[RMDB]
RNA sequence: GGGAACGACUCGAGUAGAGUCGAAAAAGAGAUGGCUCAUUCCUGAUGUGCUUUAGCCACAAGGUGUUCUGUGGCCUGAGAGCUUUCUGGACAAGUUAAGCUGUCCUGUAUGUCGUGGAACCAAAGCUCGGUAACCUGUGGAAAAAUGAUGAGCUCAACUAUAGCCAUAGUUCGCUAUGGCUAUAGUAAAAGAAACAACAACAACAAC
Reactivity to DMS in 0.01 (KOAc 150mM, MgCl2 10mM, bicine 150mM(pH8.5), 24C), signal-to-noise 4, nucleotides 027 to 156: a100g010a120g010a090u000g030g020c010u000c010a110u010u000c040c030u000g010a070u000g010u000g000c000u000u000u000a090g000c010c010a030c020a070a110g030g030u000g010u000u000c050u010g040u000g000g010c010c030u000g010a070g000a050g010c010u000u000u000c040u010g020g010a070c090a070a120g030u000u010a070a130g010c080u000g010u000c010c020u000g020u010a080u000g040u000c040g030u000g010g010a110a140c040c040a030a070a050g000c020u000c030g020g010u010a070a060c060c010u000g010u000g010g000a000a060a050a100a060u000g000a090u000g000a030g020c000u000c040a100
Reactivity to 2A3 in 0.01 (KOAc 150mM, MgCl2 10mM, bicine 150mM(pH8.5), 24C), signal-to-noise 6, nucleotides 027 to 156: a010g100a000g020a060u120g020g000c010u000c030a050u060u050c030c030u060g050a110u080g060u080g040c050u060u090u160a030g010c000c010a020c020a060a080g060g010u080g080u190u100c060u040g040u050g040g030c000c040u100g100a100g000a000g030c000u020u060u020c040u050g010g010a010c030a120a060g030u120u150a130a030g100c020u010g010u020c010c010u040g050u050a070u090g100u060c070g050u080g060g040a050a040c030c000a030a110a000g020c010u010c020g010g000u020a040a060c010c000u040g000u080g050g060a000a030a030a030a080u140g020a030u050g000a010g010c020u020c040a010

Background:
This 207-nucleotide RNA was probed chemically with DMS and 2A3. It was measured as part of the RMDB library OK3TST. DMS adducts were read by reverse transcription with MarathonRT. For DMS, 13,546 sequencing reads were counted.